[RMDB]
Chemical mapping of a 177-nucleotide RNA with DMS and 2A3. For 2A3 the reverse transcriptase was SuperScript II with manganese. For DMS, 1,584 sequencing reads were counted.

RNA sequence: GGGAACGACUCGAGUAGAGUCGAAAAUAACGAUAGUGUAGAUGGUCAUGUGCAGGUCAUCCAAGAGCUGGAGGAUACGCUAUCCGUGAAGGAAAUGGAGAUCGAGAUCCUGGCCAUGCUGGAUCGCCCCUAGUCCGGGUUUCGACCCGGACUAGGGAAAAGAAACAACAACAACAAC
Reactivity to DMS in 0.01 (KOAc 150mM, MgCl2 10mM, bicine 150mM(pH8.5), 24C), signal-to-noise 1, nucleotides 027 to 126: u030a020a230c090g050a020u000a020g000u000g020u080a010g120a100u040g000g000u000c000a000u000g000u010g000c050a300g020g010u000c000a080u020c010c070a090a030g040a220g030c000u020g000g010a160g000g020a010u000a060c250g000c260u050a020u000c050c000g000u010g000a230a090g000g000a010a070a250u000g000g000a100g000a000u000c000g010a190g020a060u000c090c040u000g030g000c000c000a010u030g000c010u000g000g000a020u020c030g020c150
Reactivity to 2A3 in 0.01 (KOAc 150mM, MgCl2 10mM, bicine 150mM(pH8.5), 24C), signal-to-noise 3, nucleotides 027 to 126: u150a040a060c110g060a060u120a050g170u190g040u160a060g000a080u000g040g010u020c040a060u060g110u180g040c080a050g000g040u000c080a140u010c070c050a050a000g050a030g230c010u000g000g000a000g000g030a030u010a050c110g050c200u060a000u000c060c030g000u100g100a090a050g050g060a040a070a010u080g040g000a010g000a040u040c010g010a030g030a220u150c000c000u000g030g010c010c000a010u040g030c000u020g000g020a010u000c020g060c010
For DMS the reverse transcriptase was MarathonRT. The 2A3 profile rests on 1,104 reads. The reactions ran in a buffer of 150 mM KOAc, 10 mM MgCl2 and 150 mM bicine (pH 8.5), at 24 C. In probing experiments dimethyl sulfate is read out at A N1 and C N3, which are open when not base-paired. Source: RMDB library OK1LIB, as collected in RNAgym.